Record summary:
An RNA of 207 nucleotides, treated with 2A3 and read out base by base. Conditions: 150 mM KOAc, 10 mM MgCl2 and 150 mM bicine (pH 8.5), 24 C. Values cover nucleotides 27 to 156. For 2A3 the reverse transcriptase was SuperScript II with manganese.

RNA sequence: GGGAACGACUCGAGUAGAGUCGAAAAGCUCUGGAAUUGAGGCCCCUCUAACAAUAAUCCAAAACUACUUCGCAGAGUAAUCUGCCGAAUCGUAGGAUGGCCAUUACUAUCUAUUUUUGGAGCAUCUAAAACUGUCAGUGCUUCGGCACUGACAGAAGUUCUGCACUUUGUUCGCAAAGUGCAGAACAAAAGAAACAACAACAACAAC
Reactivity to 2A3 in 0.01 (KOAc 150mM, MgCl2 10mM, bicine 150mM(pH8.5), 24C), signal-to-noise 1, nucleotides 027 to 156: g010c000u000c020u040g060g040a130a070u050u040g010a030g020g030c010c010c000c040u100c040u080a150a140c080a040a070u150a070a080u170c020c010a000a020a040a110c010u000a000c000u030u000c010g000c020a000g000a010g030u060a100a250u000c000u000g060c080c050g000a000a030u060c100g000u000a000g020g040a010u020g000g000c000c000a080u110u150a100c090u050a040u040c040u030a060u020u050u000u050u040g020g040a000g050c020a030u000c040u090a040a060a110a080c010u000g000u010c000a000g000u010g000c000u040u020c130g000g020c000a030c000u000g000a000c000a000g000a000a000